[RMDB]
RNA sequence: GGGAACGACUCGAGUAGAGUCGAAAAAUGUAGCCAUCGCUUCAAACUCACUUUUCAUCAACACUUCUUCAUCCAUUAAAGUGUCUUCAUCGUUGCCCCUAAGGCGCAUGCCGCAAUCACAAGUAAACUCAAUCUCACCCGUAGCGGUCGACUUGGAAUAGGCUGAUACAUUCGUGUAUCAGCCUAUAAAAGAAACAACAACAACAAC
Reactivity to DMS in 0.01 (KOAc 150mM, MgCl2 10mM, bicine 150mM(pH8.5), 24C), signal-to-noise 2, nucleotides 027 to 156: a050u000g000u000a060g010c000c020a100u000c070g030c030u000u000c020a050a060a110c040u040c060a080c060u000u000u000u000c040a110u000c050a030a060c040a060c010u000u000c050u000u000c100a140u000c100c050a100u000u010a030a040a090g000u000g030u000c000u010u000c040a060u000c040g000u000u000g020c000c010c030c080u010a060a070g020g020c070g000c140a040u000g020c010c020g000c040a060a050u020c060a030c050a090a150g010u000a020a070a110c030u010c030a050a100u000c020u020c040a070c000c010c010g020u000a160g020c030g010g030u000c030g010a040c060u000u000g020g000a090
Reactivity to 2A3 in 0.01 (KOAc 150mM, MgCl2 10mM, bicine 150mM(pH8.5), 24C), signal-to-noise 3, nucleotides 027 to 156: a040u070g020u030a020g000c000c010a110u080c060g030c040u070u080c050a130a110a070c020u050c010a040c020u050u080u110u110c040a140u090c010a080a080c020a020c050u070u110c050u170u050c060a110u010c110c000a090u060u090a110a080a060g030u000g020u040c000u060u030c040a100u040c030g140u120u130g120c030c000c040c010u060a070a020g000g040c020g050c000a040u140g010c040c000g040c050a010a050u070c010a020c010a110a010g000u070a080a070a020c050u050c070a030a090u050c040u010c020a040c000c050c030g020u010a000g000c050g070g020u010c030g030a030c020u040u120g050g010a040